RNA sequence: GGGAACGACUCGAGUAGAGUCGAAAAUAAUCGGGCAUAAGCAUAGUACCGAAGAUAUGGAAUUGAAAAAUUGGUAGGGGAGCAUUCUAGUUGCACUGAAGGCGUAUGGCGAUGUAUGCUGGAGCGGCUUAGAGAGUUGAUUCGUCAACUCUCUAAGAAAAGAAACAACAACAACAAC
Reactivity to 2A3 in 0.01 (KOAc 150mM, MgCl2 10mM, bicine 150mM(pH8.5), 24C), signal-to-noise 9, nucleotides 027 to 126: u240a020a080u050c020g010g010g000c030a040u040a190a010g060c020a030u060a130g060u080a180c000c020g020a030a020g060a050u120a040u100g080g040a040a050u090u090g080a100a090a020a040a060u080u070g060g010u050a050g010g000g000g010a020g000c010a010u050u020c010u040a030g040u050u080g020c040a020c070u060g040a050a010g050g000c020g010u040a040u070g030g010c030g020a010u070g020u070a040u090g010c020u010g020g000a030g010c030g020g000
Reactivity to DMS in 0.01 (KOAc 150mM, MgCl2 10mM, bicine 150mM(pH8.5), 24C), signal-to-noise 9, nucleotides 027 to 126: u030a100a090u010c030g010g010g010c050a080u010a100a110g010c110a080u010a090g010u010a070c030c020g010a070a070g000a100u010a070u020g000g010a070a080u010u020g010a060a070a040a070a070u020u010g000g020u010a060g010g000g010g010a060g010c050a050u010u010c080u010a070g000u010u010g000c050a100c070u010g010a090a090g000g000c040g020u010a040u010g010g000c060g010a060u010g010u000a050u010g010c020u000g000g010a070g010c060g010g010